[RMDB]
RNA sequence: GGGAACGACUCGAGUAGAGUCGAAAAAAGGUGUUCCGCUGUGGCUGCCAACCUGGUAACAGGUGCCCCAGUGUGCGUAACCUUCUUCCGUCUCCGGACGGUAGUGAUUGGUUAAGAUUUGGUGUAAUCAUAUGUCGGUAUUCGUACCGACAUAUGAAAAAGAAACAACAACAACAAC
Reactivity to DMS in 0.01 (KOAc 150mM, MgCl2 10mM, bicine 150mM(pH8.5), 24C), signal-to-noise 8, nucleotides 027 to 126: a040a040g010g010u000g010u000u010c060c010g010c010u000g010u010g010g010c110u000g010c050c060a090a100c010c010u000g000g010u020a140a170c010a010g000g000u000g000c020c010c020c010a030g010u000g010u010g030c150g010u000a050a020c010c000u000u000c020u000u000c000c010g010u000c000u000c220c160g000g000a020c010g010g010u000a010g000u010g010a110u010u000g010g010u000u000a070a100g010a150u010u010u000g020g010u000g010u010a100a150
Reactivity to 2A3 in 0.01 (KOAc 150mM, MgCl2 10mM, bicine 150mM(pH8.5), 24C), signal-to-noise 4, nucleotides 027 to 126: a000a000g130g000u100g030u250u040c020c020g000c010u020g020u070g050g000c070u070g050c050c020a030a030c010c000u000g010g020u050a140a020c000a020g010g010u010g000c010c000c020c000a030g000u050g070u120g040c100g040u030a020a020c000c000u000u040c000u030u000c000c010g010u000c000u020c030c100g120g010a000c000g020g000u020a020g050u010g080a200u080u190g050g070u040u050a070a060g060a250u050u100u170g080g010u080g040u120a080a100
Annotation: Chemical mapping of a 177-nucleotide RNA with DMS and 2A3. Source: RMDB library OK2TRN, as collected in RNAgym. The RNA was probed in 150 mM KOAc, 10 mM MgCl2 and 150 mM bicine (pH 8.5) at 24 C.